This 207-nucleotide RNA was probed chemically with 2A3 and DMS.
[RMDB]
RNA sequence: GGGAACGACUCGAGUAGAGUCGAAAAACGGAUUUCGAUCCGUAAAAAUCCUAAGUCGCUUCGUUUGACGUCAUUUGUCAGCUGACAUCGGAAACGAUGUACAGCUUGGAUUUAAUGACCGAGAAGCGAUAUGGAAUGUGCCGUUAUUCGUAACGAACUUGAGAUAUGUGUUCGCACAUAUCUCAAGAAAAGAAACAACAACAACAAC
Reactivity to 2A3 in 0.01 (KOAc 150mM, MgCl2 10mM, bicine 150mM(pH8.5), 24C), signal-to-noise 5, nucleotides 027 to 156: a010c010g000g030a010u080u090u210c230g060a030u030c020c010g000u020a070a030a020a040a000u020c010c000u060a110a030g010u000c000g000c010u030u010c020g250u100u140u300g120a120c080g000u010c000a000u000u010u020g020u000c010a000g000c020u000g000a000c010a000u000c000g000g050a060a060a030c000g000a000u000g010u070a300c000a000g000c000u000u070g000g000a000u010u080u280a010a000u000g000a000c010c010g020a020g000a090a000g000c000g000a000u000a010u030g000g020a070a100u170g060u130g160c040c020g010u040u060a060u120u130c180g090u120a070a060c110g020a070a050
Reactivity to DMS in 0.01 (KOAc 150mM, MgCl2 10mM, bicine 150mM(pH8.5), 24C), signal-to-noise 3, nucleotides 027 to 156: a050c010g000g000a050u000u000u010c260g030a050u000c000c010g000u000a020a020a100a080a090u000c010c000u000a080a300g020u000c020g000c010u000u000c000g020u000u000u010g010a140c160g030u000c000a010u000u000u010g000u010c000a060g010c020u000g010a090c000a000u010c010g060g010a230a120a250c000g010a020u010g020u000a150c000a000g010c000u000u000g020g020a020u010u000u000a020a030u000g010a020c010c020g010a150g010a020a020g030c010g020a030u000a070u000g000g000a080a070u010g030u000g000c020c020g000u010u030a120u000u010c090g000u000a060a200c090g010a170a200
About this RNA: The reactions ran in a buffer of 150 mM KOAc, 10 mM MgCl2 and 150 mM bicine (pH 8.5), at 24 C. 2A3 adducts were read by reverse transcription with SuperScript II with manganese.